[RMDB]
RNA sequence: GGGAACGACUCGAGUAGAGUCGAAAAGAAGAGAAGCGCGCGAAUUGGAAACCAGCGAACCCUAUUACGCGCGCAAGGAACCGGGCCUUGGUUCUUUGGAAAGAUUAGAUAAUGUCGCUGGUAAAGAGACUAUCAUUAGCUUCGGCUAAUGAUAGUCAAAAGAAACAACAACAACAAC
Reactivity to 2A3 in 0.01 (KOAc 150mM, MgCl2 10mM, bicine 150mM(pH8.5), 24C), signal-to-noise 4, nucleotides 027 to 126: g070a030a010g090a000g030a140a030g040c010g000c000g000c000g010a000a010u030u020g050g050a040a120a130c000c020a000g010c020g020a070a100c020c000c000u030a040u010u070a130c000g000c000g000c000g000c000a000a000g020g010a000a000c010c000g060g240g070c040c040u080u140g020g000u010u000c000u010u020u020g060g070a110a120a030g080a060u180u180a040g060a110u230a180a090u190g040u040c000g000c010u000g000g010u050a030a050a010g110a010
Reactivity to DMS in 0.01 (KOAc 150mM, MgCl2 10mM, bicine 150mM(pH8.5), 24C), signal-to-noise 2, nucleotides 027 to 126: g020a100a090g000a180g010a180a220g000c020g000c000g060c000g020a070a040u010u010g000g010a300a060a040c010c020a000g000c000g020a030a180c110c020c020u000a020u010u010a080c020g000c000g010c010g080c000a030a030g000g000a000a010c020c020g000g030g060c070c090u040u020g030g000u000u000c000u000u030u090g000g000a080a110a030g000a140u020u020a090g020a050u080a060a080u010g020u030c010g010c010u010g000g000u040a040a120a070g000a250
Chemical mapping of a 177-nucleotide RNA with 2A3 and DMS. Conditions: 150 mM KOAc, 10 mM MgCl2 and 150 mM bicine (pH 8.5), 24 C. Source: RMDB library OK1LIB, as collected in RNAgym. For 2A3 the reverse transcriptase was SuperScript II with manganese. Reactivities are given for positions 27 through 126.